[RMDB]
RNA sequence: GGGAACGACUCGAGUAGAGUCGAAAAGAUAUGGAACGCGUGACGCUGAUGACCGCAAUCGGAAACGAUUGCGCAAGGCGCACGACGUUCCUAAGUCAAAACAAACUAUGUCUUCGGACAUAGUUUGCAAUGGAACUUCGUUCGCGAAGUUCCAUUGAAAAGAAACAACAACAACAAC
Reactivity to DMS in 0.01 (KOAc 150mM, MgCl2 10mM, bicine 150mM(pH8.5), 24C), signal-to-noise 7, nucleotides 027 to 126: g010a050u010a300u010g000g000a020a000c000g000c020g010u010g010a190c030g040c000u000g000a120u020g000a180c300c020g000c000a000a000u000c000g000g000a150a120a180c000g010a010u000u000g010c010g010c010a050a120g010g010c010g010c010a010c000g010a090c000g010u000u000c000c000u000a000a100g010u000c060a100a080a100a290c020a000a000a010c000u000a000u000g010u000c000u000u020c270g030g000a010c000a000u000a000g000u000u000u000g010
Reactivity to 2A3 in 0.01 (KOAc 150mM, MgCl2 10mM, bicine 150mM(pH8.5), 24C), signal-to-noise 5, nucleotides 027 to 126: g010a020u100a040u200g010g010a010a010c000g040c000g030u040g300a290c020g060c060u050g090a300u160g050a110c080c030g000c000a000a000u000c010g020g000a040a050a070c010g000a010u000u000g020c010g000c000a010a150g010g000c010g010c010a000c000g040a010c000g000u000u000c000c000u000a020a020g020u000c040a010a000a100a170c010a000a000a000c000u010a010u020g000u000c010u050u130c300g130g000a010c000a000u010a000g000u000u000u000g000
The data come from the RNA Mapping Database (RMDB), library TTRDES. The record gives the reactivity of an RNA of 177 nucleotides to DMS and 2A3. DMS adducts were read by reverse transcription with MarathonRT. For 2A3, 12,906 sequencing reads were counted. 2A3 adducts were read by reverse transcription with SuperScript II with manganese. Conditions: 150 mM KOAc, 10 mM MgCl2 and 150 mM bicine (pH 8.5), 24 C.